Structure probing data (2A3) for a 177-nucleotide construct. The 2A3 profile rests on 720 reads. Reactivities are given for positions 27 through 126. It was measured as part of the RMDB library OK1LIB. Conditions: 150 mM KOAc, 10 mM MgCl2 and 150 mM bicine (pH 8.5), 24 C.
RNA sequence: GGGAACGACUCGAGUAGAGUCGAAAAUACUACUUAGCGUGGGCAGACAGUAAGCCGGCUCUGGCACUGGCCAGCUUACAUUGGCUAUCCUGGUCCCCAGCUCCUCGGCUCCUCAUUUUAAUCCGCCCACCGAGUGGCUGUUCGCAGCCACUCGGUGAAAAGAAACAACAACAACAAC
Reactivity to 2A3 in 0.01 (KOAc 150mM, MgCl2 10mM, bicine 150mM(pH8.5), 24C), signal-to-noise 1, nucleotides 027 to 126: u190a000c030u000a000c030u130u220a080g000c030g050u050g020g000g000c030a030g020a120c000a040g060u030a060a000g020c000c000g040g010c020u040c020u180g030g100c010a020c030u000g010g010c020c000a000g000c000u020u000a010c010a170u050u120g030g000c010u000a040u160c060c020u000g040g040u060c000c000c000c000a000g030c000u050c000c000u040c020g060g000c000u000c040c000u000c010a040u090u060u060u140a080a110u100c030c060g050c050c010